Chemical mapping of a 177-nucleotide RNA with DMS. Source: RMDB library OK2TST, as collected in RNAgym. The RNA was probed in 150 mM KOAc, 10 mM MgCl2 and 150 mM bicine (pH 8.5) at 24 C. For DMS the reverse transcriptase was MarathonRT.

RNA sequence: GGGAACGACUCGAGUAGAGUCGAAAACCACAGGAUGCCCAAAUAUUUGGUCAAACAUUAUUCUGGGUGUUUCUGUGGGGAUAAUUUGAAUGAGAUUAACAUUUAAAUUUGUAGUCUGAGCAAAGCAAAGAAAUUAUAGAUUCGUCUAUAAUUUCUUAAAAGAAACAACAACAACAAC
Reactivity to DMS in 0.01 (KOAc 150mM, MgCl2 10mM, bicine 150mM(pH8.5), 24C), signal-to-noise 1, nucleotides 027 to 126: c000c010a000c020a000g010g000a020u000g000c010c000c000a020a030a020u000a010u020u010u000g020g010u010c300a160a210a220c010a010u000u000a020u000u000c190u000g010g020g030u000g000u000u010u020c000u010g020u000g010g010g000g010a070u010a060a000u000u000u000g000a010a020u010g000a230g010a200u000u000a090a180c020a020u000u020u000a010a010a020u000u000u000g010u000a170g010u000c030u000g010a070g010c100a070a100a130g010c180a120